[RMDB]
RNA sequence: GGGAACGACUCGAGUAGAGUCGAAAAGGCGCGACGUUCGCGUCGCGCCAAAGCGCCUUGCGUGCUUCGGGCCAGAAACAGGCACAGGGACCGGAGGCAACAAAAGUACUUCGUUCGCGAAGUACAACGUACUAUAGUCCUUCGGGACUAUAGUACGAAAAGAAACAACAACAACAAC
Reactivity to 2A3 in 0.01 (KOAc 150mM, MgCl2 10mM, bicine 150mM(pH8.5), 24C), signal-to-noise 2, nucleotides 027 to 126: g010g010c030g110c010g040a080c110g090u140u150c220g010c020g150u000c000g030c000g000c010c000a000a040a000g030c020g000c010c020u020u110g190c070g050u090g040c020u020u020c030g030g030g060c030c020a050g160a110a170a040c160a070g030g030c060a000c050a160g020g000g040a040c040c000g030g020a010g000g030c030a050a000c000a020a090a000a050g000u000a000c000u000u020c010g030u010u060c240g060c010g090a000a000g010u030a010c000a000a000
Reactivity to DMS in 0.01 (KOAc 150mM, MgCl2 10mM, bicine 150mM(pH8.5), 24C), signal-to-noise 2, nucleotides 027 to 126: g060g000c000g060c000g090a000c030g040u010u010c160g040c000g190u000c020g010c030g120c000c000a020a000a090g010c300g000c000c010u010u000g040c100g030u010g000c040u000u000c080g060g000g030c030c010a160g010a110a110a110c180a080g000g000c040a090c040a130g000g000g000a020c020c040g010g000a070g000g030c040a090a070c140a020a060a070a110g000u000a000c000u010u000c000g000u000u010c200g010c000g000a010a040g010u010a010c010a060a120